The record gives the reactivity of an RNA of 177 nucleotides to 2A3 and DMS.
Conditions: 150 mM KOAc, 10 mM MgCl2 and 150 mM bicine (pH 8.5), 24 C.
Values cover nucleotides 27 to 126.

RNA sequence: GGGAACGACUCGAGUAGAGUCGAAAAGACGCUGCGCUCGUCGGCCUGCGCGGCCGUACUGGCCCAGCAGCGCGAUCAUCUAUGGCCUGCGCAGGCCUCUGGCCAUGAUCCACUGGAUCGCGCGUACCCUACCAUGGACCUUCGGGUCCAUGGUAGGAAAAGAAACAACAACAACAAC
Reactivity to 2A3 in 0.01 (KOAc 150mM, MgCl2 10mM, bicine 150mM(pH8.5), 24C), signal-to-noise 1, nucleotides 027 to 126: g060a020c070g000c050u060g010c040g010c030u040c010g050u010c040g000g020c000c000u060g030c140g080c120g020g040c000c000g020u080a070c040u050g010g050c020c010c000a030g000c040a030g030c040g000c010g000a080u030c020a000u000c040u130a020u060g030g000c010c000u090g000c190g000c070a020g110g100c000c000u050c010u020g000g020c000c000a070u050g020a020u090c060c030a160c200u160g050g000a000u000c000g030c000g000c010g030u100a120c010
Reactivity to DMS in 0.01 (KOAc 150mM, MgCl2 10mM, bicine 150mM(pH8.5), 24C), signal-to-noise 2, nucleotides 027 to 126: g010a060c030g020c020u000g020c300g040c020u020c250g020u000c140g000g010c000c010u000g060c090g050c160g000g020c050c020g000u000a040c090u000g000g000c010c030c040a110g010c090a110g020c030g010c020g000a050u000c010a090u000c060u000a010u000g010g020c010c010u000g030c070g020c060a070g010g030c020c060u010c050u000g000g000c000c010a040u000g000a050u010c060c040a190c160u030g020g000a000u000c000g070c010g040c010g030u020a060c190